[RMDB]
RNA sequence: GGGAACGACUCGAGUAGAGUCGAAAAAAUACUUAAUGGUUGCGCUUGGUUUGUAAAACCUAAUCGCACUAGUGUUGUUUCUUUUAAUGAAUGGGCUCUUGCCAACCAAUUCACUGAAUUUGUUGGCUUACCAUAGACUUCGGUCUAUGGAAAAGAAACAACAACAACAAC
Reactivity to DMS in 0.01 (KOAc 150mM, MgCl2 10mM, bicine 150mM(pH8.5), 24C), signal-to-noise 2, nucleotides 027 to 129: a020a010u100a000c000u170u060a060a130u090g050g010u000u000g000c000g060c200u020u010g010g040u000u000u000g000u070a040a000a010a020c030c020u000a000a000u020c040g050c000a000c010u030a210g030u000g060u140u050g130u040u030u010c040u070u020u000u050a120a140u050g020a150a160u090g000g000g080c090u000c030u020u000g020c000c030a000a030c000c000a040a000u080u000c050a250c180u060g010a020a060u090u000u000g030u000u000g050g010c050u020u030a000
Reactivity to 2A3 in 0.01 (KOAc 150mM, MgCl2 10mM, bicine 150mM(pH8.5), 24C), signal-to-noise 7, nucleotides 027 to 129: a000a000u270a090c060u090u130a070a090u210g100g000u230u070g010c000g000c000u010u000g050g050u090u120u120g300u300a160a150a010a000c000c000u020a010a030u040c000g000c000a010c000u030a070g020u000g010u090u010g030u000u010u000c000u010u030u080u040a130a100u160g100a080a060u090g070g060g000c010u010c020u050u050g000c000c000a000a000c030c060a020a000u030u010c190a250c300u270g000a030a020u000u000u010g010u010u000g000g010c010u000u020a020